An RNA of 177 nucleotides, treated with DMS and 2A3 and read out base by base. The DMS profile rests on 2,602 reads. For 2A3, 2,449 sequencing reads were counted. The RNA was probed in 150 mM KOAc, 10 mM MgCl2 and 150 mM bicine (pH 8.5) at 24 C.

RNA sequence: GGGAACGACUCGAGUAGAGUCGAAAAGUGCGAUCGCCGCCGAACUGCACGUGUCGCCCACGUUCGAUGCGCGCGACGAAGCCGAGCGCCGCAUCGGGUUCGUCGCCGAUUAUCUGCGCACGGCCGAAGUCCCCAUAAUGUUCGCAUUAUGGGGACUAAAAGAAACAACAACAACAAC
Reactivity to DMS in 0.01 (KOAc 150mM, MgCl2 10mM, bicine 150mM(pH8.5), 24C), signal-to-noise 2, nucleotides 027 to 126: g030u010g020c040g040a080u010c050g010c140c000g020c050c010g000a070a060c050u000g010c060a030c030g010u000g000u000c140g010c070c110c010a110c070g010u010u000c080g010a110u000g010c030g020c110g010c020g010a020c030g030a060a060g010c060c020g000a050g010c040g020c100c110g010c070a080u010c000g010g020g000u000u000c010g000u000c010g010c040c060g000a040u000u000a090u000c090u010g000c030g010c050a060c020g000g000c000c050g000a140
Reactivity to 2A3 in 0.01 (KOAc 150mM, MgCl2 10mM, bicine 150mM(pH8.5), 24C), signal-to-noise 1, nucleotides 027 to 126: g070u040g000c000g020a130u090c050g030c040c010g040c000c000g040a040a020c010u120g010c050a000c020g050u050g040u110c050g050c020c030c010a030c020g030u060u030c050g030a090u050g030c030g020c010g020c000g030a040c020g070a080a000g120c030c020g030a040g020c150g160c040c130g020c050a180u010c010g030g020g010u000u020c010g010u010c010g000c000c000g000a010u050u080a070u100c060u080g030c030g010c030a010c020g040g000c010c000g050a040